[RMDB]
RNA sequence: GGGAACGACUCGAGUAGAGUCGAAAAGUUGAGCGUAAAGACGUUCCAUAUCCUAAGCAAUCUAUUUUUACUAUUAAUAGUGUGGUCCAAAAGGAUGGUGUUGAAAACACUCCUCCUCACUAUUUUAGAAGUUAAUGAUGUUCGCAUCAUUAACUUCAAAAGAAACAACAACAACAAC
Reactivity to DMS in 0.01 (KOAc 150mM, MgCl2 10mM, bicine 150mM(pH8.5), 24C), signal-to-noise 2, nucleotides 027 to 126: g000u000u010g020a040g020c000g010u020a110a100a140g000a100c010g000u000u000c030c090a110u000a080u000c000c000u000a090a150g000c110a090a090u000c080u000a050u030u030u010u010u010a170c030u010a070u010u000a030a020u000a010g000u000g020u000g000g010u010c190c110a030a090a040a030g020g000a090u020g030g010u000g000u020u000g020a140a080a090a150c010a000c010u000c010c010u000c000c000u000c000a020c000u000a030u000u000u000u000a060
Reactivity to 2A3 in 0.01 (KOAc 150mM, MgCl2 10mM, bicine 150mM(pH8.5), 24C), signal-to-noise 4, nucleotides 027 to 126: g050u060u060g000a000g010c010g000u040a100a220a090g220a070c000g000u000u000c010c010a040u060a030u090c000c000u060a060a020g020c010a090a120u050c020u120a270u070u100u040u110u090a100c020u050a060u300u060a020a010u010a020g010u010g000u020g000g000u090c100c080a090a050a050a000g020g020a030u150g090g050u000g020u020u060g130a090a110a010a010c000a000c000u030c000c000u000c010c000u000c000a000c000u010a010u000u030u010u010a010